[RMDB]
RNA sequence: GGGAACGACUCGAGUAGAGUCGAAAAGGAUGAUCUGGUCCCGGCCAGUGAUCCGAAUUAGUACCGGGAUUGCAUCGUCGAGCCGUCAGGGGCGAAGACGAGAACCUGAAAGCACGAAGCACCGGGCGGUGCGUGUGCGAGAUAUAACGCCCAACAAAGUACGUGGAUUAUUCGUAAUCCACGUACUAAAAGAAACAACAACAACAAC
Reactivity to DMS in 0.01 (KOAc 150mM, MgCl2 10mM, bicine 150mM(pH8.5), 24C), signal-to-noise 2, nucleotides 027 to 156: g000g000a050u000g010a120u000c000u020g020g020u000c020c040c060g040g000c020c010a120g020u000g010a060u000c060c060g000a110a080u000u000a080g000u000a070c030c020g000g030g030a080u000u010g010c140a140u000c000g080u000c020g010a290g010c020c040g020u000c140a240g010g020g000g010c030g010a110a150g000a120c050g000a090g010a080a070c060c040u030g000a180a150a200g000c010a060c000g010a100a260g000c010a030c000c010g020g040g000c090g000g040u000g010c030g010u000g000u000g010c060g000a060g030a180u000a090u000a110a060c020g000c000c000c000a050a130c190a200a130
Reactivity to 2A3 in 0.01 (KOAc 150mM, MgCl2 10mM, bicine 150mM(pH8.5), 24C), signal-to-noise 2, nucleotides 027 to 156: g020g000a030u090g000a060u060c000u000g010g000u020c000c000c000g030g040c000c010a030g010u030g050a070u000c000c000g010a050a040u170u080a130g080u040a070c010c010g000g010g000a020u040u150g110c040a060u010c000g000u000c010g000a010g000c010c000g140u240c210a040g120g050g020g010c020g000a100a010g010a000c000g000a000g000a010a030c000c000u050g080a120a050a000g000c010a000c000g070a090a000g010c010a000c010c040g160g050g000c180g020g010u040g000c030g020u160g010u020g020c010g010a010g030a000u120a000u030a090a030c040g020c030c000c000a030a020c030a030a150